[RMDB]
RNA sequence: GGGAACGACUCGAGUAGAGUCGAAAACACUUAUGUAAUCAGACCAUGACGGCUACAGGGUCCUCCUACCUCAGGCCCCCUAGUGGGGCGUGGUUCGCAUGUACUUCCGGCCUUACUCCUUGCAUCCCAUCAUGGACAGAUUCGUCUGUCCAUGAUGAAAAGAAACAACAACAACAAC
Reactivity to 2A3 in 0.01 (KOAc 150mM, MgCl2 10mM, bicine 150mM(pH8.5), 24C), signal-to-noise 5, nucleotides 027 to 126: c020a010c030u230u140a160u260g110u140a100a120u120c050a040g090a100c060c020a050u100g050a050c050g050g050c010u030a030c040a060g040g020g000u010c010c010u020c000c000u030a060c010c010u050c020a040g170g030c010c000c010c000c000u050a070g020u190g200g000g000g000c010g000u000g020g000u020u070c060g010c050a040u090g030u110a060c010u040u030c030c010g030g020c000c000u020u020a040c010u020c010c000u000u070g030c000a060u040c020c000
Reactivity to DMS in 0.01 (KOAc 150mM, MgCl2 10mM, bicine 150mM(pH8.5), 24C), signal-to-noise 5, nucleotides 027 to 126: c100a120c160u000u010a100u010g000u000a070a090u000c090a100g000a130c080c060a080u000g000a090c110g010g000c010u000a060c060a150g000g010g000u000c010c040u000c010c010u000a060c060c020u000c060a090g020g010c010c000c010c010c020u010a070g040u010g020g010g010g020c010g020u000g010g010u010u000c100g020c050a040u000g000u000a070c070u010u000c040c050g020g010c030c010u000u000a080c040u000c020c030u000u000g020c100a110u010c040c030